[RMDB]
RNA sequence: GGGAACGACUCGAGUAGAGUCGAAAACGUAUGACAUUUUACUUGUCGUCCAUUUAGUGUUCUUAAUGCUGGCUCUUCUUGACGACAACGAUCCGUUGCAUAAGGACAACGUGGGUUUAAUAAACAGUCCACAAUAGUCGUUCGCGACUAUUGUGGAAAAAGAAACAACAACAACAAC
Reactivity to DMS in 0.01 (KOAc 150mM, MgCl2 10mM, bicine 150mM(pH8.5), 24C), signal-to-noise 2, nucleotides 027 to 126: c140g030u010a020u010g000a040c050a050u000u000u000u000a120c170u010u010g020u010c020g000u000c050c060a050u000u000u020a060g020u010g000u010u000c010u000u010a100a080u000g030c050u000g020g020c140u020c030u010u030c100u000u000g050a090c180g020a050c130a020a030c160g000a030u000c060c010g000u000u000g000c040a120u010a070a030g010g000a060c000a030a060c070g030u010g010g000g020u000u000u000a070a070u010a100a080a080c140a100g010
Reactivity to 2A3 in 0.01 (KOAc 150mM, MgCl2 10mM, bicine 150mM(pH8.5), 24C), signal-to-noise 2, nucleotides 027 to 126: c060g070u140a030u130g020a020c030a060u070u070u100u250a100c060u030u010g000u010c010g000u000c000c010a040u050u080u110a030g010u020g020u000u080c020u040u060a200a140u090g020c060u000g040g020c010u040c000u030u000c010u010u040g060a080c100g010a050c030a020a070c050g020a040u030c020c000g110u250u040g070c030a020u050a160a030g040g010a050c000a020a020c040g000u020g000g000g000u050u130u080a170a090u090a040a060a020c050a050g200
Record summary: An RNA of 177 nucleotides, treated with DMS and 2A3 and read out base by base. For DMS the reverse transcriptase was MarathonRT. 2A3 adducts were read by reverse transcription with SuperScript II with manganese. The data come from the RNA Mapping Database (RMDB), library OK2TST. The 2A3 profile rests on 1,412 reads. The DMS profile rests on 1,807 reads.